This 170-nucleotide RNA was probed chemically with 2A3 and DMS. The DMS profile rests on 10,713 reads. The RNA was probed in 150 mM KOAc, 10 mM MgCl2 and 150 mM bicine (pH 8.5) at 24 C. DMS adducts were read by reverse transcription with MarathonRT. The data come from the RNA Mapping Database (RMDB), library 15KLIB. Reactivities are rounded to 0.1 and cut off at 0 and 3.
[RMDB]
RNA sequence: GGGAACGACUCGAGUAGAGUCGAAAAGGAGAUGCCAUGCCGACCCGAAGAGGAAAGAAGAACACGGACGCGAACCCGUAAGUGGAACCCUGAUCCUUUAUUGGGGGGUACACUCGAGGAGUGGAAGGAGCCUGGUGCUUCGGCACCAGGAAAAGAAACAACAACAACAAC
Reactivity to 2A3 in 0.01 (KOAc 150mM, MgCl2 10mM, bicine 150mM(pH8.5), 24C), signal-to-noise 3, nucleotides 027 to 129: g050g030a080g000a030u160g020c020c020a020u090g000c010c040g070a110c020c000c010g020a040a020g020a020g010g030a000a040a010g060a000a030g020a040a020c030a040c080g020g070a000c020g030c030g060a030a040c010c000c010g020u030a030a020g030u030g040g020a110a050c000c000c010u000g080a020u130c010c030u120u110u160a130u120u090g000g000g010g020g000g010u040a020c000a010c000u000c000g020a000g070g000a020g010u040g040g010a070a030g020g030a020g010
Reactivity to DMS in 0.01 (KOAc 150mM, MgCl2 10mM, bicine 150mM(pH8.5), 24C), signal-to-noise 5, nucleotides 027 to 129: g000g030a060g010a090u050g040c050c150a060u060g020c030c030g050a110c040c030c030g010a110a080g080a100g010g050a080a090a020g020a090a050g000a090a000c080a080c040g000g040a090c000g020c100g040a070a130c060c040c020g050u040a050a070g040u020g030g000a130a130c020c010c000u000g000a090u030c030c120u030u010u010a000u000u000g000g030g000g020g010g050u040a090c070a060c030u020c090g000a080g030g020a040g040u060g030g010a070a060g030g000a050g000